[RMDB]
RNA sequence: GGGAACGACUCGAGUAGAGUCGAAAAGAACGGGACUCGUAAGACCUGGAUUGGGCUGCUCCGAUGUAAGUCGGUGAUACUCCGGUAGCCAAGGAUCUUCCUUGGCGAGCACGGUGAGAAUCGGCCCGAGGUAGAUACACUUCGGUGUAUCUACCUCAAAAGAAACAACAACAACAAC
Reactivity to DMS in 0.01 (KOAc 150mM, MgCl2 10mM, bicine 150mM(pH8.5), 24C), signal-to-noise 2, nucleotides 027 to 126: g000a180a090c050g000g030g000a160c070u000c220g020u010a060a060g010a070c010c000u010g000g010a190u000u010g000g000g000c020u000g010c060u000c000c000g000a020u000g000u020a080a110g010u000c000g000g000u000g000a120u020a170c130u000c000c000g000g020u040a300g000c000c000a000a000g000g000a070u010c270u000u000c000c010u000u000g000g000c000g010a060g030c090a130c020g000g010u010g000a090g010a130a090u010c070g010g010c000c010c020
Reactivity to 2A3 in 0.01 (KOAc 150mM, MgCl2 10mM, bicine 150mM(pH8.5), 24C), signal-to-noise 2, nucleotides 027 to 126: g030a070a000c030g010g000g060a050c070u050c170g070u090a080a020g070a070c010c040u050g090g060a160u080u210g010g010g010c020u040g010c010u000c000c000g010a000u020g080u190a110a130g020u000c010g010g000u030g010a040u020a060c020u000c020c000g000g040u000a020g000c000c000a000a000g030g000a100u090c080u110u090c110c000u000u000g000g010c000g000a000g000c090a090c010g000g030u040g000a030g060a030a050u050c040g050g000c030c000c010
Source information: Chemical mapping of a 177-nucleotide RNA with DMS and 2A3. Source: RMDB library RFMREP, as collected in RNAgym. The DMS profile rests on 1,495 reads. For DMS the reverse transcriptase was MarathonRT.